[RMDB]
RNA sequence: GGGAACGACUCGAGUAGAGUCGAAAAAGAUAUGGAGAGAAUCUCUAGCGUGAGCGAGGAUCAUCGAAGGAUGUAGUCGGAAACGACUACAUACUCAGAUGGGAGCUUCGGGUUCUCUCCUAAGUCACAUAUUAGGGCAGUUCGCUGCCCUAAUAUGAAAAGAAACAACAACAACAAC
Reactivity to 2A3 in 0.01 (KOAc 150mM, MgCl2 10mM, bicine 150mM(pH8.5), 24C), signal-to-noise 2, nucleotides 027 to 126: a010g030a030u130a040u120g000g000a000g020a010g010a030a010u070c080u070c140u300a100g130c080g230u300g100a030g000c020g040a300g030g030a040u000c010a000u010c000g070a090a010g010g000a000u010g000u010a000g000u020c000g000g020a100a080a060c000g000a000c000u010a010c000a000u000a010c070u110c050a000g000a000u010g000g000g000a010g000c010u040u070c020g000g000g000u000u000c000u000c010u030c000c000u000a020a020g000u020c000a030
Reactivity to DMS in 0.01 (KOAc 150mM, MgCl2 10mM, bicine 150mM(pH8.5), 24C), signal-to-noise 3, nucleotides 027 to 126: a110g000a020u020a300u010g010g000a030g020a040g000a040a010u000c010u010c250u010a100g050c100g000u030g000a050g030c060g020a100g020g010a140u010c010a000u000c000g000a260a100g010g000a020u000g000u000a000g020u000c000g010g000a110a140a190c000g010a020c020u010a000c000a000u000a000c010u000c170a300g010a000u000g000g000g000a180g010c010u000u000c070g010g000g020u000u000c000u010c010u000c000c010u010a000a060g020u000c030a190